[RMDB]
RNA sequence: GGGAACGACUCGAGUAGAGUCGAAAAGAUAUGGACUGUCGAAGAACACACGACCGAUGAAAUCGGAAACGAUGGAGGUCAGUGUGGGAGACAGUCCUAAGUCAAAACAGCGACUUCGGUCGCUGAAGCUCAUAAAGGAGUUCGCUCCUUUAUGAGCAAAAGAAACAACAACAACAAC
Reactivity to DMS in 0.01 (KOAc 150mM, MgCl2 10mM, bicine 150mM(pH8.5), 24C), signal-to-noise 4, nucleotides 027 to 126: g000a050u000a300u000g010g000a010c000u000g010u000c000g000a140a230g000a160a150c010a000c000a010c000g000a020c000c010g020a100u020g010a070a130a020u000c000g000g000a110a080a190c010g000a020u000g000g010a080g010g010u000c010a080g020u000g000u000g000g010g000a180g000a010c000a020g010u010c000c000u000a000a080g000u000c030a070a090a070a210c010a000g010c000g000a010c010u000u010c220g010g000u000c000g020c000u000g010a040a080
Reactivity to 2A3 in 0.01 (KOAc 150mM, MgCl2 10mM, bicine 150mM(pH8.5), 24C), signal-to-noise 3, nucleotides 027 to 126: g020a020u080a040u120g000g010a010c010u000g010u000c020g120a300a050g040a160a020c000a000c000a000c010g010a010c000c010g170a260u060g010a030a020a000u010c000g000g040a020a050a010c030g000a010u010g030g030a000g040g000u050c210a220g000u000g000u000g000g000g010a050g000a000c000a000g010u000c000c010u000a010a000g000u000c000a010a000a080a160c010a000g000c010g000a000c000u090u100c300g130g000u010c010g000c000u000g000a000a020